[RMDB]
RNA sequence: GGGAACGACUCGAGUAGAGUCGAAAAGUGGUGGAAAGAGAAUGAGAGAGGUUUGGGAAAUCCCUUUUAUAAGAGCACUAAUCCCAUUCAUGAGGGCUCUACAUUCAUGACCUAAUUACCCCCCAGAGGCCCUACGUCCUAAAACCAUUACACUGGGCGAUACUGUUAGGUUCGCCUAACAGUAUCGAAAAGAAACAACAACAACAAC
Reactivity to DMS in 0.01 (KOAc 150mM, MgCl2 10mM, bicine 150mM(pH8.5), 24C), signal-to-noise 3, nucleotides 027 to 156: g000u000g000g020u000g010g000a080a110a100g000a090g000a070a070u000g020a120g000a070g000a110g010g030u000u010u010g000g010g000a060a080a110u000c030c010c020u010u010u000u010a150u000a080a050g020a070g020c100a060c050u000a080a170u000c010c020c040a110u010u000c060a100u010g010a100g030g010g000c020u000c010u000a040c060a110u000u000c060a080u010g010a070c010c020u020a050a080u000u020a300c010c010c000c020c010c040a110g010a100g060g000c000c010c040u000a080c050g010u000c010c020u000a010a000a080a050c020c010a040u000u010a090c070a050c070u000g010g000g020
Reactivity to 2A3 in 0.01 (KOAc 150mM, MgCl2 10mM, bicine 150mM(pH8.5), 24C), signal-to-noise 4, nucleotides 027 to 156: g050u040g030g020u030g010g060a080a070a040g080a030g010a050a110u090g010a030g010a010g020a030g070g040u040u050u060g040g010g020a050a040a040u090c030c000c010u030u070u060u020a220u070a110a040g020a010g010c030a010c060u050a050a060u020c010c020c000a020u050u060c050a070u120g070a070g000g070g020c020u010c010u040a100c030a050u040u110c020a020u100g080a070c000c010u070a110a120u140u220a130c000c000c020c010c000c000a000g040a030g110g010c030c020c000u010a030c020g030u030c010c000u040a060a080a020a020c020c020a010u050u090a030c060a020c070u010g040g010g000
Structure probing data (DMS and 2A3) for a 207-nucleotide construct. Source: RMDB library OK3TST, as collected in RNAgym. Conditions: 150 mM KOAc, 10 mM MgCl2 and 150 mM bicine (pH 8.5), 24 C. For DMS, 5,027 sequencing reads were counted. 2A3 adducts were read by reverse transcription with SuperScript II with manganese. For 2A3, 2,328 sequencing reads were counted.